[RMDB]
RNA sequence: GGGAACGACUCGAGUAGAGUCGAAAAAAUCAAGUCUAAUGCCUGAUCUACUCCUUAGAUUAUAAAUCUCCCACCCUUCUCUAUGCUCUGGAUCAAAAGGGAAAAAGCUAGACUAACAAUGAACAGUAAGUGGGGAUGAAUUAAUCACUUGGUUGCAAUUACUAAUCAUCUUCGGAUGAUUAGUAAUAAAAGAAACAACAACAACAAC
Reactivity to 2A3 in 0.01 (KOAc 150mM, MgCl2 10mM, bicine 150mM(pH8.5), 24C), signal-to-noise 4, nucleotides 027 to 156: a000a010u080c030a030a030g100u000c030u180a100a070u170g020c020c030u040g030a060u000c020u060a080c040u110c030c010u060u090a060g010a010u020u030a020u090a090a090a040u030c090u110c030c000c000a010c020c000c010u070u040c020u000c000u030a040u140g030c010u000c010u100g060g040a080u100c100a070a060a130a150g040g030g080a140a000a020a030a020g020c020u040a020g020a060c030u080a090a040c060a120a130u150g040a060a030c020a010g050u120a150a000g010u030g000g010g000g010a000u000g000a010a070u040u050a010a000u030c020a030c180u030u090g090g010u040u020g020c000a040
Reactivity to DMS in 0.01 (KOAc 150mM, MgCl2 10mM, bicine 150mM(pH8.5), 24C), signal-to-noise 2, nucleotides 027 to 156: a050a010u000c030a060a010g010u010c060u010a070a160u000g010c000c020u000g010a040u000c020u000a110c060u000c030c050u000u010a100g030a020u000u020a080u000a080a090a050u040c040u000c010c000c000a090c000c000c040u010u000c050u010c010u000a080u020g000c050u000c020u000g000g040a180u010c050a040a030a030a090g000g000g030a060a040a050a040a030g000c020u000a030g010a170c090u000a060a060c090a140a150u010g000a050a090c070a070g040u000a050a070g010u000g010g050g010g040a040u000g010a090a080u000u010a020a060u000c050a080c040u000u000g010g040u000u020g040c040a080

An RNA of 207 nucleotides, treated with 2A3 and DMS and read out base by base. The reactions ran in a buffer of 150 mM KOAc, 10 mM MgCl2 and 150 mM bicine (pH 8.5), at 24 C. The 2A3 profile rests on 1,840 reads. High DMS reactivity at an A or C suggests that its Watson-Crick edge is free.